[RMDB]
RNA sequence: GGGAACGACUCGAGUAGAGUCGAAAAGAAUAAAUAGUGUCUUGGAGCGCGCGGCGUAAACAUAUAUGGUUCAUAUAUGUCCGUAGGCGCGUAAAGAAAGCGCGUCUAAGCGAGAGAAGACUCGCAAGACGGUAUGACGAUUCGUCGUCAUACCGUCAAAAGAAACAACAACAACAAC
Reactivity to 2A3 in 0.01 (KOAc 150mM, MgCl2 10mM, bicine 150mM(pH8.5), 24C), signal-to-noise 3, nucleotides 027 to 126: g020a040a020u220a110a090a050u200a070g050u100g060u070c040u030u070g080g000a110g040c000g010c020g020c000g020g000c020g040u050a010a090a000c010a000u020a000u000a000u030g260g000u140u110c040a000u000a010u000a000u010g000u020c050c020g000u020a060g000g080c000g000c000g000u010a020a010a000g130a030a050a000g000c040g010c000g010u030c030u120a110a060g010c000g010a030g000a000g010a110a060g070a060c010u000c010g000c030a020a030
Reactivity to DMS in 0.01 (KOAc 150mM, MgCl2 10mM, bicine 150mM(pH8.5), 24C), signal-to-noise 3, nucleotides 027 to 126: g040a160a090u040a040a080a100u040a070g020u000g010u080c010u000u030g030g000a280g000c000g000c000g030c030g000g020c170g000u000a140a100a060c010a000u000a000u000a000u000g000g040u010u060c040a010u000a020u010a000u000g010u010c000c070g020u000a080g010g010c010g000c000g010u000a030a110a160g010a090a100a070g000c010g000c020g020u020c010u010a050a080g010c000g000a020g050a170g000a170a080g020a030c000u000c000g000c010a080a130